This 207-nucleotide RNA was probed chemically with 2A3. Conditions: 150 mM KOAc, 10 mM MgCl2 and 150 mM bicine (pH 8.5), 24 C.
RNA sequence: GGGAACGACUCGAGUAGAGUCGAAAAAAGUGCACAAAGUGAAAUGAGCUUAUGAAAAGCUUAAUUAACUAGAAAAAUGUUACUGAAAGAAAAAUUACAUGGUACAUGACAAGGCUAAAUACUAGUAACUCUAAACUUAGUGAAUUUUCUAGGCAGCCGAUAGCAACUGCUUCGGCAGUUGCUAUCGAAAAGAAACAACAACAACAAC
Reactivity to 2A3 in 0.01 (KOAc 150mM, MgCl2 10mM, bicine 150mM(pH8.5), 24C), signal-to-noise 1, nucleotides 027 to 156: a000a000g090u030g000c060a030c060a020a090a000g080u070g060a060a060a190u070g000a020g050c030u060u140a140u300g070a160a190a000a000g000c000u000u000a000a050u020u030a080a000c020u040a060g090a020a120a020a020a100u060g020u070u070a000c000u050g050a090a050a060g040a130a050a040a050a080u080u050a040c030a060u220g000g020u060a050c030a000u110g020a020c050a080a060g000g000c000u070a000a040a090u050a100c030u020a020g020u020a020a000c030u000c020u100a150a270a100c030u000u130a000g000u030g100a030a060u060u000u000u000c000u000a020g000g060c080a000g000c100

For 2A3 the reverse transcriptase was SuperScript II with manganese.